[RMDB]
About this RNA
An RNA of 207 nucleotides, treated with 2A3 and read out base by base. Source: RMDB library OK3TST, as collected in RNAgym. Values are in units of 0.01, from 0 to 300, in steps of 10. The RNA was probed in 150 mM KOAc, 10 mM MgCl2 and 150 mM bicine (pH 8.5) at 24 C.

RNA sequence: GGGAACGACUCGAGUAGAGUCGAAAACGCCUUUCCUAGCAACUUCGUCCGGAGUUGGCAUCGGAGUUUUUAUACCGGAAACAAUGGAUAGUGAGGCGACAUCUUCCGUAGAUAUCGGCAUACCGUCGUCACGUUUCAUCGCCGUAGACGUAACGUAGACUCUUCGUACCUUCGGGUACGAAGAGUCAAAAGAAACAACAACAACAAC
Reactivity to 2A3 in 0.01 (KOAc 150mM, MgCl2 10mM, bicine 150mM(pH8.5), 24C), signal-to-noise 1, nucleotides 027 to 156: c070g030c000c040u040u060u000c010c030u110a090g110c010a010a040c020u030u030c020g240u120c090c180g000g000a060g090u070u040g080g010c010a030u100c050g020g010a060g080u070u000u040u120u160a210u100a090c000c110g000g000a100a030a060c100a070a130u100g030g020a030u080a100g080u160g000a030g000g040c030g120a120c050a080u000c020u040u030c050c000g020u080a140g070a260u140a050u140c000g030g000c050a060u050a120c050c010g010u000c010g040u000c020a030c000g070u040u060u000c070a120u080c010g020c020c000g140u080a070g010a030c010g010u060a040a000c010g000u000a030